RNA sequence: GGGAACGACUCGAGUAGAGUCGAAAAGAAAGAAAGAAUCACUUUCAAGAGUGGCAAAGUCUUUCCAUAUGUAUGUAUGUAUGUCUGUUACACAUAUGGAAAGACUUUGCCACUCUUUAAAGUGAAACUAAUACAACCGUUUCGACGGUUGUAUUAGAAAAGAAACAACAACAACAAC
Reactivity to DMS in 0.01 (KOAc 150mM, MgCl2 10mM, bicine 150mM(pH8.5), 24C), signal-to-noise 5, nucleotides 027 to 126: g010a130a100a110g020a090a070a080g010a150a170u010c000a000c000u000u000u000c050a010a020g000a010g030u000g000g000c000a000a010a010g000u000c000u000u000u000c000c000a010u000a000u000g000u010a090u010g020u000a020u010g010u010a090u030g020u030c150u020g000u010u010a020c020a040c000a000u000a000u000g000g000a010a000a000g000a000c000u010u000u000g000c010c000a000c000u000c000u000u000u000a000a000a000g000u000g000a020a050a150